[RMDB]
This 177-nucleotide RNA was probed chemically with 2A3 and DMS. For 2A3, 10,966 sequencing reads were counted.
RNA sequence: GGGAACGACUCGAGUAGAGUCGAAAACUAUUUAUAGACAGAACAGUGGAAAACGUAUAUCGCUAUAAACCUUAAACUCCGAAUCUUCCAGUCGUACCAUUCCACAUAGGCGAGGCAUAAGCGAAAGCAGCCUAUUUAUGUUCGCAUAAAUAGGCUGAAAAGAAACAACAACAACAAC
Reactivity to 2A3 in 0.01 (KOAc 150mM, MgCl2 10mM, bicine 150mM(pH8.5), 24C), signal-to-noise 7, nucleotides 027 to 126: c000u020a050u040u130u040a120u020a020g060a040c080a040g040a150a010c020a040g050u060g070g080a100a120a000a000c010g030u040a080u020a020u170c020g000c020u020a010u070a100a080a080c010c010u050u160a070a070a040c030u020c030c020g040a070a060u020c020u040u000c030c010a010g020u030c020g010u010a060c000c020a040u060u040c020c000a030c020a050u060a060g020g010c020g020a020g030g000c040a070u060a130a020g010c040g030a030a030a010g030
Reactivity to DMS in 0.01 (KOAc 150mM, MgCl2 10mM, bicine 150mM(pH8.5), 24C), signal-to-noise 5, nucleotides 027 to 126: c060u010a060u010u010u020a050u030a040g010a080c050a190g000a040a030c060a080g010u030g000g010a080a050a090a090c070g010u010a060u030a080u020c060g010c030u010a060u020a030a050a080c110c060u010u010a050a060a110c070u010c040c040g000a070a040u010c050u000u010c020c020a060g040u000c020g010u010a080c030c030a090u020u000c030c020a020c090a070u030a030g000g010c060g000a060g000g000c040a070u000a030a110g030c040g010a050a060a060g020

Source: RMDB library OK1LIB, as collected in RNAgym. The reactions ran in a buffer of 150 mM KOAc, 10 mM MgCl2 and 150 mM bicine (pH 8.5), at 24 C. The DMS profile rests on 10,532 reads.